Structure probing data (DMS and 2A3) for a 207-nucleotide construct.
It was measured as part of the RMDB library OK3TST.
For DMS the reverse transcriptase was MarathonRT.
Values cover nucleotides 27 to 156.
The RNA was probed in 150 mM KOAc, 10 mM MgCl2 and 150 mM bicine (pH 8.5) at 24 C.
RNA sequence: GGGAACGACUCGAGUAGAGUCGAAAAGACGUGGAGGUUCCGCGCCCUCCUUUGCGCGUAAGUACGUCGAAAUUCGGUGCUUCGGAUCGCACCGUUGGAUCCAUUUGAUAUCCGCUUAGUGCCGCGGUUGGGCAUUUACACUUACCCGAAAGGGGAACGUAGCAGUAGUGUUCGCACUACUGCUACGAAAAGAAACAACAACAACAAC
Reactivity to DMS in 0.01 (KOAc 150mM, MgCl2 10mM, bicine 150mM(pH8.5), 24C), signal-to-noise 2, nucleotides 027 to 156: g000a040c040g050u000g000g010a110g020g020u010u010c020c020g020c070g010c110c010c050u010c060c020u000u020u000g000c010g000c090g010u000a020a110g020u000a070c060g040u000c040g000a070a060a190u000u000c020g000g010u010g020c000u010u000c050g020g000a140u000c290g040c010a040c010c000g050u000u010g000g000a150u000c050c060a220u000u000u010g010a150u000a110u000c010c000g000c090u010u020a050g000u000g040c050c020g010c010g020g000u000u000g000g000g010c040a090u000u000u000a100c060a070c080u000u000a160c000c010c000g000a040a110a230g000g000g010g010a010a080
Reactivity to 2A3 in 0.01 (KOAc 150mM, MgCl2 10mM, bicine 150mM(pH8.5), 24C), signal-to-noise 4, nucleotides 027 to 156: g010a010c030g010u030g030g070a080g030g070u120u060c070c000g000c000g010c000c010c010u150c030c020u040u090u160g020c040g010c010g020u050a060a050g060u060a040c020g030u020c050g040a000a030a100u080u050c000g000g000u000g000c010u090u100c050g080g020a080u080c060g010c010a030c020c010g010u020u030g000g020a050u030c020c040a080u060u050u250g110a090u080a040u030c010c010g020c030u060u170a020g020u030g060c010c030g040c080g040g000u030u030g020g000g000c000a010u060u050u110a060c100a010c030u080u150a040c010c000c000g040a090a030a040g050g000g000g000a020a030